[RMDB]
An RNA of 177 nucleotides, treated with 2A3 and DMS and read out base by base. Source: RMDB library OK2TRN, as collected in RNAgym. Values are in units of 0.01, from 0 to 300, in steps of 10.
RNA sequence: GGGAACGACUCGAGUAGAGUCGAAAAGUCAGGCGAUGAUCGAUCUGAAAGCUGAACUGGCCAACCUCAAAGCCCAAUUCAAAGCCGCUAAGUAAGGAGACGGAAAAUGACCAAACAAGUCCAGAUCCUCUCAUAACAGUUUCGACUGUUAUGAGAGAAAAGAAACAACAACAACAAC
Reactivity to 2A3 in 0.01 (KOAc 150mM, MgCl2 10mM, bicine 150mM(pH8.5), 24C), signal-to-noise 3, nucleotides 027 to 126: g050u030c020a010g000g040c050g060a050u100g040a070u120c040g030a080u050c020u040g030a100a040a030g010c050u070g010a050a040c020u010g020g000c000c010a030a040c030c020u040c020a040a050a050g030c010c000c000a040a040u130u060c030a070a050a030g010c020c020g000c020u050a060a020g030u020a080a020g070g030a030g030a020c020g020g030a010a040a050a100u130g020a040c020c010a000a080a080c050a100a030g030u030c010c030a010g000a060u010c000
Reactivity to DMS in 0.01 (KOAc 150mM, MgCl2 10mM, bicine 150mM(pH8.5), 24C), signal-to-noise 5, nucleotides 027 to 126: g010u000c040a060g000g000c050g040a140u010g010a110u000c050g020a060u000c050u000g020a080a110a150g010c030u000g000a090a120c080u010g010g000c030c030a040a080c070c060u010c060a040a100a150g000c030c010c040a060a130u000u000c090a040a110a110g020c050c030g000c050u010a060a100g020u010a070a050g000g010a080g010a080c060g000g000a020a040a080a080u000g010a110c040c030a040a070a090c140a080a090g000u000c030c040a090g010a100u000c070
Values cover nucleotides 27 to 126.